An RNA of 207 nucleotides, treated with 2A3 and DMS and read out base by base.

RNA sequence: GGGAACGACUCGAGUAGAGUCGAAAACAACCUGGGAGUUACGUCCGGAUAUUGCUCCAGGUGCAAUAGAACGGUAGACAUCAACUGAUGCGAGAGCAUCUCAACUUAUGGACCUUAGUGUAUCGCAAGACGACCGGUCCGGUCGGAAUUGCGUAGAACUACUACUCCCUUUCGAGGGAGUAGUAGUAAAAGAAACAACAACAACAAC
Reactivity to 2A3 in 0.01 (KOAc 150mM, MgCl2 10mM, bicine 150mM(pH8.5), 24C), signal-to-noise 3, nucleotides 027 to 156: c040a000a080c010c010u050g070g040g000a080g060u050u100a090c060g030u040c030c020g000g020a050u060a030u030u060g000c010u040c050c000a080g070g090u010g010c020a030a050u020a080g110a200a050c020g020g040u000a020g050a100c010a110u080c040a030a100c050u080g000a000u020g000c020g010a060g000a000g060c020a060u000c000u010c080a050a120c010u080u080a090u180g040g000a010c020c020u080u080a070g040u060g040u150a050u150c020g000c000a000a030g010a000c010g000a000c000c010g080g150u110c130c140g000g000u020c020g010g020a300a130u010u010g000c000g010u010a020g000a030
Reactivity to DMS in 0.01 (KOAc 150mM, MgCl2 10mM, bicine 150mM(pH8.5), 24C), signal-to-noise 2, nucleotides 027 to 156: c040a060a190c010c010u000g020g030g050a150g000u010u000a070c090g020u000c020c060g000g030a080u000a030u000u000g000c010u000c070c070a140g020g010u000g000c030a050a060u000a070g010a120a190c030g010g020u000a090g030a060c030a100u020c090a120a200c040u000g000a030u000g030c010g010a300g030a260g030c010a030u000c000u010c030a050a120c100u000u000a070u010g010g000a050c030c020u000u000a070g000u000g000u010a150u000c050g010c030a040a020g030a220c010g020a020c000c000g070g020u000c090c070g010g020u010c000g000g020a080a090u000u010g030c010g040u000a110g000a090

Source information:
The 2A3 profile rests on 1,752 reads. For DMS the reverse transcriptase was MarathonRT. The RNA was probed in 150 mM KOAc, 10 mM MgCl2 and 150 mM bicine (pH 8.5) at 24 C.